Structure probing data (2A3) for a 177-nucleotide construct.
RNA sequence: GGGAACGACUCGAGUAGAGUCGAAAAGGUGGGAACCGGCGGUUCGACGGCCAAGAUGGAUGUCUACCAACGCACCGCCGCCGGCUGGCAGCCGCUCAAGACCGGUAUCACCACCCAUAUCGGUUCGAAACCCGAGCCUAUUCGUAGGCUCGGGUUUAAAAGAAACAACAACAACAAC
Reactivity to 2A3 in 0.01 (KOAc 150mM, MgCl2 10mM, bicine 150mM(pH8.5), 24C), signal-to-noise 1, nucleotides 027 to 126: g000g000u000g000g050g000a050a050c010c020g040g000c000g000g000u020u030c000g000a030c050g000g150c050c150a000a050g030a000u300g150g110a170u300g060u000c000u000a060c000c000a050a070c000g000c000a000c000c000g000c000c000g000c030c000g000g000c000u020g000g070c000a020g060c070c290g120c000u030c140a140a250g080a230c000c000g000g000u060a090u000c060a060c050c000a170c000c000c000a000u110a300u070c000g020g000u280u000c060g080
Reactivities are given for positions 27 through 126. Source: RMDB library OK1LIB, as collected in RNAgym.